[RMDB]
RNA sequence: GGGAACGACUCGAGUAGAGUCGAAAAGACGGCCGCGGGCGGGUCUAACAGUUGGAUGAUUUUAGUGGCGGGAUGCCACCGCGCCACCGCCUCCCGCACCGCGGGCAGGAGGCAUCCGGCUGCCGCCCUCACUACGCAGCUUCGGCUGCGUAGUGAGAAAAGAAACAACAACAACAAC
Reactivity to 2A3 in 0.01 (KOAc 150mM, MgCl2 10mM, bicine 150mM(pH8.5), 24C), signal-to-noise 1, nucleotides 027 to 126: g050a030c050g040g030c000c000g060c060g050g010g030c020g010g000g000u040c080u090a110a040c010a040g000u020u040g020g030a020u020g000a070u010u010u140u300a090g000u000g000g040c040g000g040g040a050u280g030c000c000a060c010c010g230c000g020c030c000a000c000c020g000c000c000u030c000c020c010g000c050a210c010c220g000c000g010g000g010c000a000g010g010a050g000g000c000a010u010c000c010g040g000c020u040g010c030c030g000c000c000
Reactivity to DMS in 0.01 (KOAc 150mM, MgCl2 10mM, bicine 150mM(pH8.5), 24C), signal-to-noise 1, nucleotides 027 to 126: g070a300c100g080g000c140c180g030c050g000g010g010c080g030g020g000u000c140u060a100a030c030a100g040u020u010g000g000a030u030g000a170u000u090u070u060a080g010u000g000g030c000g030g010g020a210u050g000c140c040a060c020c000g000c000g060c020c030a040c000c120g010c040c040u000c000c000c020g000c010a110c120c070g010c070g000g000g010c090a060g000g060a110g000g020c050a040u000c020c010g000g000c010u000g040c040c000g000c040c060

Chemical mapping of a 177-nucleotide RNA with 2A3 and DMS.
For DMS the reverse transcriptase was MarathonRT.
The 2A3 profile rests on 702 reads.
For DMS, 909 sequencing reads were counted.
The RNA was probed in 150 mM KOAc, 10 mM MgCl2 and 150 mM bicine (pH 8.5) at 24 C.
It was measured as part of the RMDB library OK1LIB.
Reactivities are given for positions 27 through 126.